Structure probing data (2A3 and DMS) for a 177-nucleotide construct. The data come from the RNA Mapping Database (RMDB), library OK1LIB. DMS adducts were read by reverse transcription with MarathonRT. Conditions: 150 mM KOAc, 10 mM MgCl2 and 150 mM bicine (pH 8.5), 24 C.

RNA sequence: GGGAACGACUCGAGUAGAGUCGAAAAACGUCUGCGGCCGCCAUGCACUACGCGAUCUCGGCGGCGGGAUUCGGAGAGAUAGGCACCAAACUGCCCGCAGAAUUUCUCAAACACUACCGAGACGGAGUGUCUGCGGAGAAUUCGUUCUCCGCAGACAAAAAGAAACAACAACAACAAC
Reactivity to 2A3 in 0.01 (KOAc 150mM, MgCl2 10mM, bicine 150mM(pH8.5), 24C), signal-to-noise 3, nucleotides 027 to 126: a000c080g010u030c020u070g070c000g010g000c030c000g010c010c000a040u100g010c050a060c140u130a070c150g050c050g100a120u070c000u030c030g080g000c070g030g110c090g000g000g000a090u220u130c030g000g080a050g000a000g000a080u090a190g010g010c010a000c030c030a130a060a090c040u060g020c010c000c000g000c010a000g000a020a040u000u040u000c010u000c000a100a080a010c120a010c020u230a210c020c000g040a050g050a110c140g050g020a040g010
Reactivity to DMS in 0.01 (KOAc 150mM, MgCl2 10mM, bicine 150mM(pH8.5), 24C), signal-to-noise 1, nucleotides 027 to 126: a020c170g010u000c000u020g000c000g000g040c080c220g010c080c050a030u040g060c070a080c020u000a090c110g000c150g000a080u020c050u000c020g030g050c160g010g000c000g000g000g000a050u020u020c030g000g000a060g000a120g040a110u000a040g010g010c010a040c070c130a030a000a230c090u030g000c180c000c000g040c010a000g040a100a040u010u020u000c010u000c010a090a100a030c080a110c020u020a010c040c000g030a090g000a080c070g000g010a070g000